[RMDB]
RNA sequence: GGGAACGACUCGAGUAGAGUCGAAAAGAAAGCGUACUAAGGAUGGGAAUGUACGCGAAAGGUGGAGCCAUCCGAUGUCAGGAAUAAACUCUCGAAUAACUGACGGAGAGGAUUCUAGAACACCGAACCCAUAAGUUAACUUCGGUUAACUUAUGGGAAAAGAAACAACAACAACAAC
Reactivity to DMS in 0.01 (KOAc 150mM, MgCl2 10mM, bicine 150mM(pH8.5), 24C), signal-to-noise 7, nucleotides 027 to 126: g020a120a090a150g010c010g000u010a000c000u010a170a140g000g000a050u010g010g000g000a100a110u020g020u000a000c010g020c000g000a030a070a110g000g010u000g000g010a110g010c020c020a030u020c030c010g000a090u070g030u010c060a300g010g000a040a040u020a070a060a120c030u010c020u010c020g000a140a080u040a120a140c200u020g010a110c190g000g000a060g010a030g000g000a040u000u000c030u000a100g010a080a130c010a010c010c010g020a060a130
Reactivity to 2A3 in 0.01 (KOAc 150mM, MgCl2 10mM, bicine 150mM(pH8.5), 24C), signal-to-noise 9, nucleotides 027 to 126: g110a030a050a000g000c000g000u010a000c000u050a040a120g090g020a060u140g030g010g060a140a140u110g000u020a000c010g020c020g020a090a040a010g030g010u030g020g010a020g020c010c010a010u010c000c010g040a070u130g060u140c070a030g030g110a060a050u150a110a180a100c030u040c030u040c080g060a110a080u150a200a080c090u090g080a050c030g070g010a040g000a020g030g020a000u030u000c030u070a060g020a120a010c010a010c010c010g010a050a040